[RMDB]
RNA sequence: GGGAACGACUCGAGUAGAGUCGAAAAGAAGAAGCAAAAGAAGCAGUCAGGACAUUACUCAAAUUCAUUGGUGAAGAUCCAAAUAGAGAAGGUUUGCUUAAAACGCCUGAUAGAGUAAUAAAUAGCAGAGUCGGGGGUCGUUCGCGAUCCCUGGCUCAAAAGAAACAACAACAACAAC
Reactivity to 2A3 in 0.01 (KOAc 150mM, MgCl2 10mM, bicine 150mM(pH8.5), 24C), signal-to-noise 6, nucleotides 027 to 126: g050a030a010g040a030a010g040c040a050a070a030a040g040a080a020g030c030a010g060u060c030a010g050g020a040c010a060u020u040a020c010u020c010a030a070a120u210u060c030a040u030u090g000g000u050g040a100a050g060a070u020c010c010a020a030a040u160a060g080a010g020a070a030g050g020u030u070u070g010c000u040u040a070a110a070a040c040g000c010c010u020g000a040u060a050g040a000g010u020a010a070u040a090a090a060u160a030g070c070a040
Reactivity to DMS in 0.01 (KOAc 150mM, MgCl2 10mM, bicine 150mM(pH8.5), 24C), signal-to-noise 9, nucleotides 027 to 126: g010a120a090g000a090a070g010c040a030a040a090a090g010a100a080g020c040a070g000u000c070a070g000g010a110c120a050u000u000a030c020u000c010a060a090a160u010u000c060a080u000u010g010g020u000g010a100a110g010a080u000c040c010a020a030a090u000a110g000a070g010a100a060g000g000u000u000u000g010c070u000u010a040a070a100a140c110g000c010c020u000g010a060u010a140g000a040g010u000a020a030u000a060a080a090u010a090g020c150a110